Structure probing data (DMS and 2A3) for a 177-nucleotide construct. Source: RMDB library 15KREP, as collected in RNAgym. Reactivities are given for positions 27 through 126. 2A3 adducts were read by reverse transcription with SuperScript II with manganese. Conditions: 150 mM KOAc, 10 mM MgCl2 and 150 mM bicine (pH 8.5), 24 C.
RNA sequence: GGGAACGACUCGAGUAGAGUCGAAAAUCAAAGAGGUCUGUAAAACUACUACUGGUAUACCUGAAUACAACUUUAUCAUCUACGACUCAUCAGAUCGUGGCCAGGAAAGUUUAGCUAGGUCUGCAUGCAUUUCCUUUCCGUUCGCGGAAAGGAAAUGAAAAGAAACAACAACAACAAC
Reactivity to DMS in 0.01 (KOAc 150mM, MgCl2 10mM, bicine 150mM(pH8.5), 24C), signal-to-noise 1, nucleotides 027 to 126: u020c040a090a150a140g000a080g020g010u000c060u000g000u010a080a020a080a070c040u020a010c010u000a180c070u000g010g030u010a020u000a030c080c080u010g000a120a110u010a030c110a050a050c160u000u010u000a110u000c080a140u010c010u000a040c040g000a010c100u000c040a160u020c100a100g000a050u000c050g000u000g010g000c020c100a090g010g000a050a020a040g010u000u000u000a110g000c010u010a030g000g000u000c010u000g000c250a090u000g030
Reactivity to 2A3 in 0.01 (KOAc 150mM, MgCl2 10mM, bicine 150mM(pH8.5), 24C), signal-to-noise 1, nucleotides 027 to 126: u040c010a020a020a010g180a030g000g040u040c040u030g060u220a000a010a120a030c000u050a010c010u000a010c020u040g010g000u030a050u060a150c000c030u010g090a080a030u110a060c070a100a020c090u130u080u120a120u110c010a030u000c010u060a040c000g040a020c020u000c040a160u080c030a090g010a000u020c010g020u000g040g000c010c000a000g010g030a010a000a000g020u000u050u080a020g010c000u020a000g020g000u050c010u020g000c000a010u020g030